This 207-nucleotide RNA was probed chemically with 2A3 and DMS. The DMS profile rests on 2,104 reads. 2A3 adducts were read by reverse transcription with SuperScript II with manganese. The data come from the RNA Mapping Database (RMDB), library OK3TST.
[RMDB]
RNA sequence: GGGAACGACUCGAGUAGAGUCGAAAACUGAACUGAGCUACCACCCUAAGGAAGAGCUUAGGUGGAAUAGGGCAGAAUAAAUAAGAUGUGAAAUGGGAAUAACAUUUGUAGAAGAACUGAGUCAGCUUGGAGCCAGGAUCAGGAACCAGGAAGUUUAUAGUAGUAUAUUAUUCGUAAUAUACUACUAAAAAGAAACAACAACAACAAC
Reactivity to 2A3 in 0.01 (KOAc 150mM, MgCl2 10mM, bicine 150mM(pH8.5), 24C), signal-to-noise 3, nucleotides 027 to 156: c010u020g020a050a020c020u010g030a010g070c010u070a110c010c010a030c060c010c020u050a070a030g100g040a070a100g060a060g110c010u020u030a030g000g010u040g010g050a120a110u080a100g030g020g000c010a020g030a090a020u060a090a040a000u150a030a040g060a050u080g030u030g100a010a070a100u120g010g000g050a070a030u120a100a030c030a040u030u080u140g060u090a060g010a100a010g020a050a020c040u050g030a020g050u040c040a030g020c020u060u110g010g000a000g000c010c010a020g020g000a050u030c010a000g000g020a000a020c020c000a000g020g050a060a020g030u010u110u210a120
Reactivity to DMS in 0.01 (KOAc 150mM, MgCl2 10mM, bicine 150mM(pH8.5), 24C), signal-to-noise 1, nucleotides 027 to 156: c100u000g010a070a180c050u010g000a140g030c030u010a140c020c020a040c030c040c030u000a030a050g040g010a060a260g010a170g000c010u000u020a080g010g050u010g030g000a060a120u010a120g000g010g020c020a080g010a140a110u010a030a100a100u010a080a180g010a020u000g000u000g000a060a030a070u010g010g040g010a050a000u000a100a100c040a030u000u000u010g000u010a100g000a070a070g010a040a070c050u000g010a160g010u010c030a100g020c010u000u010g030g010a130g050c000c010a050g010g010a050u010c150a040g010g010a050a100c010c000a040g010g010a080a130g010u020u000u000a120